An RNA of 170 nucleotides, treated with DMS and 2A3 and read out base by base. 2A3 adducts were read by reverse transcription with SuperScript II with manganese.
RNA sequence: GGGAACGACUCGAGUAGAGUCGAAAAAGAUGGCAGGAACCCACUCAUUGGGGUCCGCUGUUCCAUUCUUUCUUACCUUGUGGCCGGCAUGGUCCCAGCCUCCUCGCUGGCGCCGGCUGGGCAACAUCAACUGUAUACUUCGGUAUACAGAAAAGAAACAACAACAACAAC
Reactivity to DMS in 0.01 (KOAc 150mM, MgCl2 10mM, bicine 150mM(pH8.5), 24C), signal-to-noise 9, nucleotides 027 to 129: a000g020a000u020g000g020c050a080g000g000a040a020c000c000c000a090c300u060c190a200u090u060g000g010g000g010u020c030c000g040c130u010g020u070u060c000c020a030u010u000c020u000u000u000c100u040u040a060c060c050u020u020g020u010g030g040c000c020g000g010c050a050u050g010g010u000c300c000c000a000g010c010c100u050c130c090u020c220g000c020u060g000g000c240g040c040c040g020g040c000u000g000g000g000c060a020a010c050a030u050c130a060a100
Reactivity to 2A3 in 0.01 (KOAc 150mM, MgCl2 10mM, bicine 150mM(pH8.5), 24C), signal-to-noise 9, nucleotides 027 to 129: a000g020a010u020g010g000c020a020g020g020a050a050c010c030c020a110c080u250c080a230u160u300g010g000g000g010u040c020c020g080c070u020g050u160u070c020c000a030u160u070c000u030u050u010c030u080u120a150c020c000u040u060g050u080g060g040c010c000g010g010c050a140u200g020g030u090c030c010c010a000g010c000c010u150c030c040u100c110g000c000u010g010g000c030g010c010c000g030g010c000u010g000g000g010c010a060a030c010a100u140c020a020a100
Conditions: 150 mM KOAc, 10 mM MgCl2 and 150 mM bicine (pH 8.5), 24 C.